[RMDB]
RNA sequence: GGGAACGACUCGAGUAGAGUCGAAAAAGGGACCAAAAAGAAAGCCCUGAGACUUUUUGCAAUAUCUUCGCUUCUUGGCGGGACCAGUACAGGGGAAGAAAAAUGAUAUUGUGAUUUCUGCCCUGCCGUAUAAUUGUUAGUUCGCUAACAAUUAUACAAAAGAAACAACAACAACAAC
Reactivity to DMS in 0.01 (KOAc 150mM, MgCl2 10mM, bicine 150mM(pH8.5), 24C), signal-to-noise 6, nucleotides 027 to 126: a090g010g010g000a280c050c020a020a300a090a050a060g000a100a110a120g010c010c110c060u000g020a070g010a120c110u000u000u010u020u010g010c130a040a030u000a050u000c020u010u000c110g010c020u010u010c050u000u000g000g020c300g000g010g000a120c030c020a110g020u010a120c080a060g000g010g010g010a080a030g010a020a050a020a080a080u010g000a090u000a110u000u000g020u010g010a140u000u000u000c020u000g000c010c000c000u000g010c090c110
Reactivity to 2A3 in 0.01 (KOAc 150mM, MgCl2 10mM, bicine 150mM(pH8.5), 24C), signal-to-noise 4, nucleotides 027 to 126: a000g010g000g000a010c020c000a000a100a000a000a030g070a060a060a030g030c050c050c140u110g030a020g030a050c060u210u160u130u300u300g000c070a070a040u050a020u110c020u050u070c040g020c030u040u010c030u060u080g010g000c000g010g020g010a030c010c000a020g020u040a020c010a030g020g020g020g020a120a110g050a020a060a010a020a020u130g070a050u100a080u230u160g060u040g060a100u010u020u000c000u020g040c000c000c000u020g040c020c040